[RMDB]
Record summary: Chemical mapping of a 177-nucleotide RNA with DMS and 2A3. Source: RMDB library OK2TRN, as collected in RNAgym. For DMS the reverse transcriptase was MarathonRT. The DMS profile rests on 6,739 reads.
RNA sequence: GGGAACGACUCGAGUAGAGUCGAAAAGAUAGGUAGAGGCAAGGAUGCUGCACAGAAUCCUGCAAGGCACAGGAUGCCACCCAGCCCCUGACAGAGACUCCUCCGGGCCUAGAUGUCAGCGGGGCCAUCCUAGUCAGAUAUUCGUAUCUGACUAGGAAAAAGAAACAACAACAACAAC
Reactivity to DMS in 0.01 (KOAc 150mM, MgCl2 10mM, bicine 150mM(pH8.5), 24C), signal-to-noise 6, nucleotides 027 to 126: g010a100u000a070g010g020u010a060g010a110g010g000c030a080a080g020g010a040u000g010c060u010g000c120a070c120a100g000a140a070u010c030c000u000g010c080a090a110g010g010c060a070c050a100g010g010a260u000g010c030c050a100c030c030c040a170g000c010c010c010c010u000g000a040c020a040g010a110g000a060c070u000c010c110u000c170c180g000g000g010c030c010u000a060g000a150u000g010u000c020a020g010c160g010g000g000g030c070c140a080
Reactivity to 2A3 in 0.01 (KOAc 150mM, MgCl2 10mM, bicine 150mM(pH8.5), 24C), signal-to-noise 2, nucleotides 027 to 126: g030a040u170a060g000g050u090a020g010a050g170g000c040a080a020g050g000a030u090g030c020u050g040c050a040c030a060g130a060a050u040c010c000u010g030c040a040a100g050g000c060a010c010a060g000g080a060u030g030c000c010a020c000c000c000a010g050c000c000c000c020u010g000a000c020a010g140a020g020a130c030u040c030c000u070c070c120g010g000g000c000c000u080a090g010a160u050g020u040c000a000g050c070g050g020g000g050c020c000a010